[RMDB]
RNA sequence: GGGAACGACUCGAGUAGAGUCGAAAAGGUCCUCAAGAUUCGAGAUGGCAGCAAGGAACCCAGGUCGAGAUGGGACAUUGUGCGGCUCAUCCCACCUCAGACGUACCUGCAAGCUGAGGGUGAAGACCGUCCAACACCGAUUCGUCGGUGUUGGACGAAAAGAAACAACAACAACAAC
Reactivity to 2A3 in 0.01 (KOAc 150mM, MgCl2 10mM, bicine 150mM(pH8.5), 24C), signal-to-noise 1, nucleotides 027 to 126: g010g040u020c000c010u060c040a000a030g140a100u190u160c060g060a010g020a200u080g040g000c030a020g010c050a070a090g100g000a020a070c010c010c010a010g000g160u060c100g160a020g000a160u060g010g000g040a010c040a060u170u230g010u050g140c080g000g030c030u030c000a010u090c000c060c000a040c000c030u010c060a000g000a060c040g050u010a200c040c040u050g080c060a000a060g050c010u010g010a000g030g030g000u060g010a040a000g010a060c050
Reactivity to DMS in 0.01 (KOAc 150mM, MgCl2 10mM, bicine 150mM(pH8.5), 24C), signal-to-noise 1, nucleotides 027 to 126: g000g000u000c000c000u000c080a100a150g010a230u010u000c090g040a040g000a050u000g000g040c080a090g000c090a050a080g030g020a120a140c080c010c000a070g010g020u000c060g000a050g000a060u020g000g000g000a140c110a080u000u000g010u000g020c050g000g000c050u000c050a050u000c010c010c040a080c020c010u000c000a000g050a040c050g020u010a110c100c040u000g000c070a110a130g000c010u000g000a030g000g000g010u010g010a060a030g000a090c010